RNA sequence: GGGAACGACUCGAGUAGAGUCGAAAAAAAGAUAUGGAUGUUGUGGAGAUCUCGCUCGGUCGAUGAAAGCUCUCGGAAACGAGAGCUGGAGACCGAGAGAUCGUUGAAACAACAUCCUAAGUCAAAAGUAACGCUUUAUCUUCGGAUAAAGCGUUACAAAAGAAACAACAACAACAAC
Reactivity to DMS in 0.01 (KOAc 150mM, MgCl2 10mM, bicine 150mM(pH8.5), 24C), signal-to-noise 2, nucleotides 027 to 126: a070a080a060g030a300u170a300u010g000g050a020u000g000u000u000g020u000g020g000a200g020a000u010c080u000c050g000c160u010c000g050g000u000c000g000a120u020g040a150a160a010g000c000u000c000u000c000g040g000a100a100a170c000g010a060g000a000g030c000u000g000g000a060g000a010c000c000g000a020g010a000g000a000u010c120g010u010u020g060a300a100a010c000a010a010c000a000u010c000c010u000a020a080g020u000c010a160a090a100a130